RNA sequence: GGGAACGACUCGAGUAGAGUCGAAAAAAGUUGGCGCUCGAACUGUACAUCCACAGGCACUUCGAAAAGUUGGGAGUGCACGACUUGGAGGUCCACACAGAGGGGGAACAAUGGACAGUCGUCAGGAGAUGUGAUGAAUGUUCGCAUUCAUCACAUCAAAAGAAACAACAACAACAAC
Reactivity to DMS in 0.01 (KOAc 150mM, MgCl2 10mM, bicine 150mM(pH8.5), 24C), signal-to-noise 4, nucleotides 027 to 126: a060a080g030u000u000g010g010c060g030c050u000c050g020a050a120c070u000g020u010a100c070a100u000c050c050a060c140a120g010g000c030a010c010u000u000c040g020a090a080a080a080g000u010u000g020g020g020a020g030u000g020c020a050c050g000a050c100u000u000g000g020a100g000g010u000c020c040a040c150a050c130a100g020a110g030g000g010g010g000a050a070c120a080a050u000g010g000a050c090a050g010u000c070g030u010c040a080g010g010a270
Reactivity to 2A3 in 0.01 (KOAc 150mM, MgCl2 10mM, bicine 150mM(pH8.5), 24C), signal-to-noise 2, nucleotides 027 to 126: a010a000g080u040u050g050g000c030g020c010u040c020g050a100a010c000u030g000u060a030c010a100u050c030c010a030c030a060g060g000c030a030c050u030u070c060g180a140a090a130a180g190u230u170g090g020g000a020g000u040g020c030a060c040g050a040c020u010u020g050g000a030g050g020u000c060c000a030c000a010c020a060g030a070g100g010g020g020g010a040a020c050a090a040u100g000g010a010c000a010g110u090c010g050u050c050a010g000g030a160

Chemical mapping of a 177-nucleotide RNA with DMS and 2A3.
Reactivities are given for positions 27 through 126.
For DMS, 3,175 sequencing reads were counted.
For 2A3, 1,604 sequencing reads were counted.